[RMDB]
RNA sequence: GGGAACGACUCGAGUAGAGUCGAAAAGCACUAAUGGUCAUGCUGUACCGACUCUCUUUAGACUUAAGGGAGGUGCACCUGUAAAAAAAGUAGCCUUUGGCGGUGAUCAAGUACAUGAGGUUGCUGCAACGGGCAAGGUUCGCCUUGCCCAAAAGAAACAACAACAACAAC
Reactivity to DMS in 0.01 (KOAc 150mM, MgCl2 10mM, bicine 150mM(pH8.5), 24C), signal-to-noise 2, nucleotides 027 to 129: g010c120a020c060u020a000a000u070g010g010u060c110a140u050g030c040u000g000u010a000c000c000g020a000c040u070c010u000c000u010u040u060a090g040a190c100u010u160a030a080g020g010g000a050g000g000u040g010c000a090c050c010u050g060u050a020a000a100a150a000a100a090g020u000a080g000c010c050u030u040u020g000g030c100g000g070u020g040a020u060c060a090a130g030u010a130c110a000u060g010a000g000g020u000u000g020c030u010g060c080a120a020c300
Reactivity to 2A3 in 0.01 (KOAc 150mM, MgCl2 10mM, bicine 150mM(pH8.5), 24C), signal-to-noise 4, nucleotides 027 to 129: g010c000a000c050u100a040a070u210g080g030u090c040a020u070g030c020u010g060u070a060c010c020g060a060c010u010c000u000c000u030u100u110a090g030a180c040u070u080a040a020g040g000g000a030g000g030u030g000c020a050c000c030u070g130u130a030a010a080a010a000a000a030g070u060a000g020c000c000u010u030u140g040g000c000g030g040u040g010a030u050c030a070a070g070u030a150c000a090u100g080a040g030g000u000u020g000c010u020g020c000a020a080c070
Structure probing data (DMS and 2A3) for a 170-nucleotide construct. For DMS, 7,255 sequencing reads were counted. Source: RMDB library 15KLIB, as collected in RNAgym.